RNA sequence: GGGAACGACUCGAGUAGAGUCGAAAAGCCAUGCUAGGUGAUCGCUAGCAUGGCACGAGUACAUCGCUGAUCUACUAGAGUCUAGGAUCACUGAUCCAUGGACUAGAUCUAGUACUCUCAUGCGCCAAGUCUCAGGCACAUUCGUGUGCCUGAGACUAAAAGAAACAACAACAACAAC
Reactivity to DMS in 0.01 (KOAc 150mM, MgCl2 10mM, bicine 150mM(pH8.5), 24C), signal-to-noise 1, nucleotides 027 to 126: g000c010c000a000u010g010c010u000a000g010g010u000g000a060u020c300g020c000u000a020g030c000a000u000g010g010c020a000c070g050a080g010u000a040c050a120u000c180g010c190u010g000a030u000c050u000a090c100u030a100g030a030g020u000c000u000a120g020g060a030u000c010a200c190u000g000a040u000c010c070a130u010g010g000a020c010u000a090g000a090u000c000u000a040g020u000a020c030u000c060u000c110a080u000g000c030g000c000c020a110
Reactivity to 2A3 in 0.01 (KOAc 150mM, MgCl2 10mM, bicine 150mM(pH8.5), 24C), signal-to-noise 2, nucleotides 027 to 126: g000c000c000a000u000g000c000u010a020g030g040u120g210a110u140c050g010c050u000a000g030c000a020u000g000g030c000a000c000g040a020g000u080a030c030a110u110c140g010c240u150g000a020u000c000u040a090c070u050a050g080a020g290u060c000u020a010g000g020a060u000c080a090c300u240g000a030u000c060c010a120u200g000g000a000c000u010a050g010a030u000c000u000a020g000u000a020c000u000c020u000c050a050u150g000c030g010c060c030a050